[RMDB]
RNA sequence: GGGAACGACUCGAGUAGAGUCGAAAAGAUAUGGAACGCUACCCACCUAUUCUAACGCUAUGAAGUCGGAAACGAUGGAGCGUUACUAUAGAGGCGUUCCUAAGUCAAACGACGCUUCGGCGUCGAAGUCUUUAUAAAGGUUCGCCUUUAUAAAGACAAAAGAAACAACAACAACAAC
Reactivity to 2A3 in 0.01 (KOAc 150mM, MgCl2 10mM, bicine 150mM(pH8.5), 24C), signal-to-noise 6, nucleotides 027 to 126: g040a050u210a180u260g000g010a000a000c010g030c010u110a240c030c010c010a020c000c010u010a020u020u000c010u010a020a010c000g000c000u070a220u300g050a050a010g020u020c000g020g050a090a050a080c010g000a010u030g030g000a000g010c000g000u000u000a010c000u000a010u000a000g000a020g000g020c010g000u000u000c000c000u010a050a010g080u040c130a140a070a130c010g010a000c000g000c010u040u100c300g160g000c010g000u000c000g000a020a020
Reactivity to DMS in 0.01 (KOAc 150mM, MgCl2 10mM, bicine 150mM(pH8.5), 24C), signal-to-noise 5, nucleotides 027 to 126: g010a110u010a180u000g010g000a000a000c010g010c020u010a120c020c010c010a300c110c010u000a020u000u000c080u010a010a020c010g020c020u000a220u020g000a090a260g000u010c010g020g000a100a050a190c010g000a020u000g000g010a000g010c000g010u000u000a000c020u000a020u000a010g000a110g020g000c000g010u000u000c000c010u000a020a060g010u010c120a060a070a170c020g000a010c000g030c010u000u010c160g020g000c000g010u000c010g000a030a080